This 177-nucleotide RNA was probed chemically with 2A3 and DMS. It was measured as part of the RMDB library OK2TST. 2A3 adducts were read by reverse transcription with SuperScript II with manganese. For 2A3, 1,479 sequencing reads were counted. For DMS, 1,758 sequencing reads were counted. High DMS reactivity at an A or C suggests that its Watson-Crick edge is free.
[RMDB]
RNA sequence: GGGAACGACUCGAGUAGAGUCGAAAAUAUCACCGCGUUCGAAAACAUCGACCACAUCACGGCGCUAGCCCGUCCGGGUCCGUUGUCUUCUGGUAUGGCCACCAAGUAUAUCGAGCGUGUGGCCGGCGGUCUAUCAUGUGUUCGCACAUGAUAGACCAAAAGAAACAACAACAACAAC
Reactivity to 2A3 in 0.01 (KOAc 150mM, MgCl2 10mM, bicine 150mM(pH8.5), 24C), signal-to-noise 2, nucleotides 027 to 126: u130a030u050c030a020c070c000g000c040g010u030u070c030g030a000a000a060a080c040a080u040c020g040a030c000c000a090c000a110u130c040a020c030g000g030c010g020c100u070a050g030c010c000c050g060u050c020c020g030g030g000u000c080c020g030u000u020g040u000c070u070u020c020u000g060g070u080a090u110g010g030c030c010a030c020c020a090a030g110u070a090u040a030u300c080g020a020g060c030g000u090g010u020g060g000c000c000g000g020c030
Reactivity to DMS in 0.01 (KOAc 150mM, MgCl2 10mM, bicine 150mM(pH8.5), 24C), signal-to-noise 2, nucleotides 027 to 126: u010a150u020c100a140c050c030g000c060g030u000u020c070g010a040a030a110a050c060a020u010c020g000a080c000c000a110c150a110u000c160a100c080g000g010c100g000c110u010a130g010c050c010c000g010u000c100c130g020g010g000u000c020c090g000u000u000g000u000c060u000u000c000u000g010g030u010a050u000g000g030c020c020a060c010c040a050a110g010u000a140u000a160u010c080g000a120g010c160g000u000g020u010g010g020c000c000g010g020c120